Source: RMDB library TTRDEL, as collected in RNAgym. The record gives the reactivity of an RNA of 177 nucleotides to DMS and 2A3. Reactivities are given for positions 27 through 126. The DMS profile rests on 1,184 reads. High DMS reactivity at an A or C suggests that its Watson-Crick edge is free. For DMS the reverse transcriptase was MarathonRT. The reactions ran in a buffer of 150 mM KOAc, 10 mM MgCl2 and 150 mM bicine (pH 8.5), at 24 C.
RNA sequence: GGGAACGACUCGAGUAGAGUCGAAAAGAUAUGGAUUAGUGAUGACCUACAUACCCAGUCGGAAACGAUAGUGGGUGUAGCAAGCUAAUCCUAAGUCAAAAGACCACAAGGUUCGCCUUGUGGUCAAGGUAUACGUGGACUUCGGUCCACGUAUACCAAAAGAAACAACAACAACAAC
Reactivity to DMS in 0.01 (KOAc 150mM, MgCl2 10mM, bicine 150mM(pH8.5), 24C), signal-to-noise 2, nucleotides 027 to 126: g000a030u020a300u000g020g020a000u000u010a060g000u020g020a060u010g020a050c300c040u010a060c020a050u020a130c020c000c060a190g000u000c010g000g000a140a070a100c010g000a000u000a010g020u000g040g000g010u000g000u000a020g040c030a070a120g010c000u000a000a000u000c000c000u000a040a070g000u000c040a090a060a050a230g000a040c000c000a000c000a010a020g000g020u010u010c220g020c000c010u000u000g020u010g000g000u000c000a000a010
Reactivity to 2A3 in 0.01 (KOAc 150mM, MgCl2 10mM, bicine 150mM(pH8.5), 24C), signal-to-noise 1, nucleotides 027 to 126: g040a000u060a010u100g000g010a010u020u000a020g020u050g180a300u120g040a170c020c050u030a070c020a030u180a210c000c000c000a020g030u020c000g040g060a080a020a070c020g010a000u010a120g230u290g020g060g000u000g000u020a010g030c010a250a130g000c010u000a030a020u000c000c010u000a140a020g040u030c020a120a000a000a200g000a010c000c000a000c000a000a000g090g000u100u100c280g260c100c010u020u000g030u020g000g000u010c000a010a000